Source: RMDB library OK1LIB, as collected in RNAgym. Structure probing data (2A3) for a 177-nucleotide construct. The reactions ran in a buffer of 150 mM KOAc, 10 mM MgCl2 and 150 mM bicine (pH 8.5), at 24 C.
RNA sequence: GGGAACGACUCGAGUAGAGUCGAAAAUGGUCAUGCAGGGCAAUCUCAGGGCAACGGUCACCGAUGCGUGCCUCCGGGCUGUGAAGACUGUGGGCGCGACCACGAUCCUCAAUCCGAGCCCCUAAUCACCGACGUGAGCUUUCGAGCUCACGUCGGUAAAAGAAACAACAACAACAAC
Reactivity to 2A3 in 0.01 (KOAc 150mM, MgCl2 10mM, bicine 150mM(pH8.5), 24C), signal-to-noise 1, nucleotides 027 to 126: u000g000g060u090c030a000u150g000c000a050g000g000g060c000a000a010u000c010u050c100a020g000g010g000c050a200a000c000g000g060u070c010a000c030c010g090a070u250g150c120g020u080g000c020c000u000c000c020g020g020g000c020u080g090u090g170a140a140g020a020c080u030g000u000g000g110g030c050g000c000g050a020c010c000a000c090g010a060u020c030c030u020c020a000a040u050c020c010g000a000g030c010c010c000c010u090a070a070u150c020